[RMDB]
RNA sequence: GGGAACGACUCGAGUAGAGUCGAAAAGAAGCUGUCUUCGGACAGCUUCGGUUUAUUUCGUGUAAUCGUCGAGUCGUUCCCAUGAUUACAUGAAAUAAUUAGCUGUCUGCGGAUUCGUCCGCAGAAAUGCCAAUAUGUGUUUCGACACAUAUUGGCAAAAAGAAACAACAACAACAAC
Reactivity to DMS in 0.01 (KOAc 150mM, MgCl2 10mM, bicine 150mM(pH8.5), 24C), signal-to-noise 1, nucleotides 027 to 126: g010a010a010g020c010u000g000u000c000u000u020c230g000g010a020c000a020g000c000u000u010c000g040g000u000u000u000a030u010u000u000c010g050u020g010u000a090a050u000c000g020u020c070g030a040g040u010c000g030u000u000c000c000c000a010u010g010a030u020u000a020c120a060u000g000a020a050a070u010a030a030u000u020a090g000c150u000g010u000c010u010g030c000g020g000a030u010u010c240g020u010c000c000g020c000a020g000a020a030a090